[RMDB]
RNA sequence: GGGAACGACUCGAGUAGAGUCGAAAAUCGAUGGUAAAGAGGCGGUUGGUUUCCUUAUCAAAAUCAAAGAUGCUAUAGAACAACCAGAAGGGUUACUUGAUUUUUAAAUGGCACAAUCUACGACUACCGAAAAUACUAAGUUCGCUUAGUAUUUUCGAAAAGAAACAACAACAACAAC
Reactivity to 2A3 in 0.01 (KOAc 150mM, MgCl2 10mM, bicine 150mM(pH8.5), 24C), signal-to-noise 4, nucleotides 027 to 126: u060c010g010a030u060g000g040u080a000a070a090g070a050g060g050c040g030g060u040u050g040g030u020u040u060c010c000u020u030a120u070c040a030a080a060a040u060c030a030a100a040g060a070u090g020c010u070a040u050a200g080a130a050c030a020a040c030c020a020g150a150a060g160g040g000u030u040a030c020u040u060g060a100u090u060u010u040u150a050a190a090u050g020g000c000a000c010a040a040u020c020u050a040c040g090a040c030u060a050c010
Reactivity to DMS in 0.01 (KOAc 150mM, MgCl2 10mM, bicine 150mM(pH8.5), 24C), signal-to-noise 6, nucleotides 027 to 126: u000c050g010a100u000g010g010u000a050a080a090g010a130g000g020c080g010g010u010u000g020g010u000u000u010c020c020u010u000a090u010c100a040a060a090a060u000c070a030a100a100g020a110u000g000c060u010a090u000a090g010a090a090c080a050a060c040c040a130g000a110a100g010g000g010u000u000a070c090u000u000g000a030u000u010u010u000u030a040a060a090u010g010g010c130a050c070a060a070u000c060u000a070c120g010a070c110u010a090c150